[RMDB]
Chemical mapping of a 177-nucleotide RNA with 2A3 and DMS. Conditions: 150 mM KOAc, 10 mM MgCl2 and 150 mM bicine (pH 8.5), 24 C. The DMS profile rests on 3,379 reads. It was measured as part of the RMDB library M2PK90. 2A3 adducts were read by reverse transcription with SuperScript II with manganese. Reactivities are given for positions 27 through 126.
RNA sequence: GGGAACGACUCGAGUAGAGUCGAAAAUAUUAGGGUGUGAGAGUAUCUCUCUCCCAGCCGGUUCGCGCAGCCAUCUUUUUCGACUAUACUUGGGUUAGCUGCGCGAACUGGCUGGCGUUCCCAGCAACUUCACACUUAAGUUCGCUUAAGUGUGAAGAAAAGAAACAACAACAACAAC
Reactivity to 2A3 in 0.01 (KOAc 150mM, MgCl2 10mM, bicine 150mM(pH8.5), 24C), signal-to-noise 4, nucleotides 027 to 126: u090a030u070u090a030g000g030g000u010g000u010g000a000g010a010g040u300a300u120c060u010c010u000c000u010c010c000c020a000g010c010c000g000g000u000u000c000g000c010g000c000a010g020c020c050a130u050c140u030u160u030u030u070c020g040a030c040u110a040u140a300c080u120u140g040g000g040u080u100a020g000c000u000g000c000g000c000g000a000a010c000u000g000g000c000u000g000g010c000g000u000u010c000c000c010a000g030c010a020a050
Reactivity to DMS in 0.01 (KOAc 150mM, MgCl2 10mM, bicine 150mM(pH8.5), 24C), signal-to-noise 2, nucleotides 027 to 126: u000a030u000u000a160g010g010g010u000g010u000g000a010g010a040g020u010a140u010c080u000c000u000c020u010c010c010c000a010g000c000c000g000g010u000u000c000g020c000g000c010a020g000c020c130a060u000c020u000u000u000u010u010c060g010a050c060u010a080u000a060c160u000u010g010g010g010u000u010a050g000c000u000g000c000g010c000g010a000a000c000u000g000g000c000u010g000g000c010g020u000u000c000c000c000a200g010c190a090a110